[RMDB]
RNA sequence: GGGAACGACUCGAGUAGAGUCGAAAAACUCCCUUUCGAGGGAGUAAAAAGAUAUGGAUCCCAAUUUCGCUUGGAUUUACCACUAUGUCGGAAACGACAUAAGAAGUUGUCAGCGAAAUAAGGGAUCCUAAGUCAAAAAACGUCGUUCGCGACGUAACAGUCCCACUGAGUUCGCUCAGUGGGACUGAAAAGAAACAACAACAACAAC
Reactivity to 2A3 in 0.01 (KOAc 150mM, MgCl2 10mM, bicine 150mM(pH8.5), 24C), signal-to-noise 1, nucleotides 027 to 156: a000c000u020c000c000c020u000u020u040c180g080a020g000g000g000a040g000u020a010a040a060a040a000g050a060u050a040u090g020g010a010u000c010c000c030a000a020u020u020u020c010g000c020u050u280g090g000a010u140u240u300a050c000c050a000c030u000a000u010g000u020c000g000g040a090a090a110c030g000a000c000a000u010a000a040g020a010a010g000u000u050g120u140c000a000g000c020g130a000a000a000u110a090a250g000g000g000a000u000c000c000u000a010a000g020u020c090a040a040a040a010a040a040c000g000u020c000g010u060u060c300g000c010g280a020c000g000u010a020a020

Chemical mapping of a 207-nucleotide RNA with 2A3. Conditions: 150 mM KOAc, 10 mM MgCl2 and 150 mM bicine (pH 8.5), 24 C. For 2A3, 687 sequencing reads were counted.